The record gives the reactivity of an RNA of 177 nucleotides to 2A3 and DMS. Conditions: 150 mM KOAc, 10 mM MgCl2 and 150 mM bicine (pH 8.5), 24 C. The 2A3 profile rests on 1,203 reads. Values cover nucleotides 27 to 126.
[RMDB]
RNA sequence: GGGAACGACUCGAGUAGAGUCGAAAAUUACGAGGCGAAGAUGGCCAAGAUCCUCUCAGGGCUCUACCCCAUCGACGAGACGGCGAAGCUAUUCUUGGACACACUGCGAUCAGCAGUCGGUGAAGCCCGGGUACGAAGGAUUCGUCCUUCGUACCCGAAAAGAAACAACAACAACAAC
Reactivity to 2A3 in 0.01 (KOAc 150mM, MgCl2 10mM, bicine 150mM(pH8.5), 24C), signal-to-noise 1, nucleotides 027 to 126: u160u070a010c050g050a010g020g010c000g020a040a040g080a130u030g050g030c000c010a000a040g040a060u060c000c000u000c000u030c030a020g000g050g000c010u000c010u120a120c010c000c000c010a080u130c050g070a080c030g000a010g000a000c060g010g030c050g090a090a020g000c040u020a070u120u020c010u030u000g060g030a010c000a000c000a000c100u030g020c030g180a240u080c010a000g050c000a030g000u040c070g000g100u080g040a060a000g000c000c000
Reactivity to DMS in 0.01 (KOAc 150mM, MgCl2 10mM, bicine 150mM(pH8.5), 24C), signal-to-noise 3, nucleotides 027 to 126: u010u000a100c100g040a250g010g030c050g000a080a110g000a070u000g000g030c010c040a070a110g000a100u000c050c000u010c070u010c120a160g000g000g010c060u010c070u000a070c130c070c010c050a060u020c090g010a130c100g010a090g000a030c150g010g000c050g000a080a140g010c070u010a130u010u000c010u010u030g000g000a090c150a050c050a080c000u010g010c100g010a130u010c250a160g000c010a020g020u000c060g030g050u000g000a100a170g000c040c040